The data come from the RNA Mapping Database (RMDB), library OK2TST. The record gives the reactivity of an RNA of 177 nucleotides to DMS and 2A3. The RNA was probed in 150 mM KOAc, 10 mM MgCl2 and 150 mM bicine (pH 8.5) at 24 C. For DMS the reverse transcriptase was MarathonRT. For 2A3 the reverse transcriptase was SuperScript II with manganese. Values cover nucleotides 27 to 126. The 2A3 profile rests on 1,891 reads.
[RMDB]
RNA sequence: GGGAACGACUCGAGUAGAGUCGAAAAUGUGACUCAACGCCAGGAAGCCGCUCAACUGAUGCGCGAAUCAAUAAAGGAAGAAGGUGUUAUUCAGUUCUUAUUGAAAUCAUUCCAUAACGGUGAGUGGAUGUCGGAUUAAGUUCGCUUAAUCCGACAUAAAAGAAACAACAACAACAAC
Reactivity to DMS in 0.01 (KOAc 150mM, MgCl2 10mM, bicine 150mM(pH8.5), 24C), signal-to-noise 3, nucleotides 027 to 126: u010g020u000g020a070c030u000c060a060a070c060g000c010c100a120g000g000a090a070g000c070c020g020c010u010c050a140a090c140u000g010a070u000g020c030g010c070g010a090a120u000c020a020a020u010a040a030a080g010g010a080a070g010a050a050g000g020u010g000u010u020a110u000u000c000a080g010u010u020c040u000u000a070u000u000g010a020a060a060u010c060a100u000u010c020c010a070u010a080a080c080g010g000u010g000a030g020u000g010g000
Reactivity to 2A3 in 0.01 (KOAc 150mM, MgCl2 10mM, bicine 150mM(pH8.5), 24C), signal-to-noise 2, nucleotides 027 to 126: u050g030u040g010a010c010u000c080a080a030c060g000c010c000a020g020g040a050a020g050c060c010g000c010u020c030a070a260c070u150g000a070u080g030c010g000c040g040a030a030u030c010a000a040u080a170a110a010g060g010a010a040g030a060a030g060g080u120g050u270u100a100u000u020c020a040g030u030u060c010u070u040a050u020u040g020a040a080a070u130c040a040u050u060c020c000a040u060a170a030c060g070g050u060g010a010g000u030g050g020